The record gives the reactivity of an RNA of 177 nucleotides to 2A3 and DMS. DMS adducts were read by reverse transcription with MarathonRT. For 2A3, 735 sequencing reads were counted. For DMS, 4,720 sequencing reads were counted. Values cover nucleotides 27 to 126.
[RMDB]
RNA sequence: GGGAACGACUCGAGUAGAGUCGAAAAAAAUACCAGCUCUACUGCUCAUGAACUGGAUGAUUUUGGUCAAGAUACUUGACUGCUGAGGUUCAGUUUCCUCACCUGUAAAGUAGAGGUGAUAGAUUAGAUUCUUAAAGGACUUCGGUCCUUUAAGAAUAAAAGAAACAACAACAACAAC
Reactivity to 2A3 in 0.01 (KOAc 150mM, MgCl2 10mM, bicine 150mM(pH8.5), 24C), signal-to-noise 1, nucleotides 027 to 126: a010a010a000u160a020c000c020a030g000c010u000c000u000a020c000u020g100c020u010c080a110u080g000a050a010c020u010g060g040a040u040g050a040u000u040u090u200g010g000u020c010a000a020g060a190u110a300c060u010u010g010a000c010u010g060c040u060g040a020g100g040u010u010c000a000g000u030u000u000c030c040u060c020a030c000c000u090g140u160a020a140a090g030u020a030g020a000g000g040u010g020a020u050a050g050a030u000u150a040g010
Reactivity to DMS in 0.01 (KOAc 150mM, MgCl2 10mM, bicine 150mM(pH8.5), 24C), signal-to-noise 4, nucleotides 027 to 126: a040a080a100u000a050c000c000a020g010c000u000c010u000a030c030u010g010c190u000c060a060u000g010a020a030c020u000g000g000a040u010g010a220u000u010u010u010g020g000u000c010a010a010g000a230u000a120c060u000u000g010a030c000u010g010c110u000g000a190g000g010u000u000c030a030g010u000u000u000c070c100u000c070a030c100c060u000g010u010a060a160a060g010u000a030g000a040g000g010u000g000a030u000a030g000a140u000u000a080g000
The RNA was probed in 150 mM KOAc, 10 mM MgCl2 and 150 mM bicine (pH 8.5) at 24 C. For 2A3 the reverse transcriptase was SuperScript II with manganese.